[RMDB]
The data come from the RNA Mapping Database (RMDB), library OK2TRN.
Structure probing data (2A3 and DMS) for a 177-nucleotide construct.
Values cover nucleotides 27 to 126.
The RNA was probed in 150 mM KOAc, 10 mM MgCl2 and 150 mM bicine (pH 8.5) at 24 C.

RNA sequence: GGGAACGACUCGAGUAGAGUCGAAAAGAAGGAGGUCUGCCCUUUUCCUCAUAUAUCCUUACCACGGCAGACUUCGAAGGGCUUGAGAAUGAGGAAAAGGUGGUAAGGAUAUGUCUCAAGCCUUAGACUACAGGUAUCUAUUCGUAGAUGCCUGUAGAAAAGAAACAACAACAACAAC
Reactivity to 2A3 in 0.01 (KOAc 150mM, MgCl2 10mM, bicine 150mM(pH8.5), 24C), signal-to-noise 4, nucleotides 027 to 126: g040a010a010g050g030a020g000g030u000c000u000g000c020c000c000u010u010u020u010c010c000u040c060a010u150a020u030a010u120c000c000u000u010a000c000c010a030c010g020g000c010a000g000a010c000u030u010c000g030a050a030g030g000g000c000u010u000g000a010g010a080a110u160g010a080g080g000a030a040a010a030g100g020u020g000g000u010a000a000g000g000a000u020a050u070g020u000c000u000c000a000a000g000c000c000u010u010a030g010a010
Reactivity to DMS in 0.01 (KOAc 150mM, MgCl2 10mM, bicine 150mM(pH8.5), 24C), signal-to-noise 9, nucleotides 027 to 126: g000a040a030g000g000a170g010g000u000c000u000g000c010c010c050u000u000u000u000c000c000u000c250a120u010a090u010a060u000c000c000u000u000a010c010c000a040c040g000g000c010a010g010a030c020u000u000c070g000a100a130g000g000g000c000u000u000g000a030g010a060a110u010g010a130g020g000a110a050a060a100g010g020u000g010g010u000a010a010g010g010a030u000a020u010g010u000c010u000c000a010a010g000c000c000u000u000a080g000a220